[RMDB]
RNA sequence: GGGAACGACUCGAGUAGAGUCGAAAAGGGUAAGGAGACUUAUCCGCAUCGGUAAGCCGAUGUAAGAGCAUCAGACAUCCUAAGGCUCGCCGGCGUGUAUUUAUCCAUGCCGGCUCAAACCCAUAGGGCUAUCAUUCUCUGUGCGGUCAAGGAUGAAGCUACUUAGCACGUUCGCGUGCUAAGUAGCAAAAGAAACAACAACAACAAC
Reactivity to 2A3 in 0.01 (KOAc 150mM, MgCl2 10mM, bicine 150mM(pH8.5), 24C), signal-to-noise 1, nucleotides 027 to 156: g010g000g000u010a000a000g000g030a050g020a010c010u020u000a010u000c000c000g000c000a000u000c000g020g000u130a170a130g150c040c000g020a000u000g000u010a050a000g040a000g020c000a000u090c010a010g130a140c000a020u010c000c000u010a010a010g040g000c010u020c010g030c000c000g180g000c020g000u000g030u020a140u080u300u040a040u000c050c000a000u000g000c000c000g000g020c000u000c000a000a030a000c000c000c000a000u010a010g040g010g000c050u100a120u300c090a120u300u000c010u040c000u000g040u010g060c170g030g000u030c050a040a000g020g000a010u040g040a020a020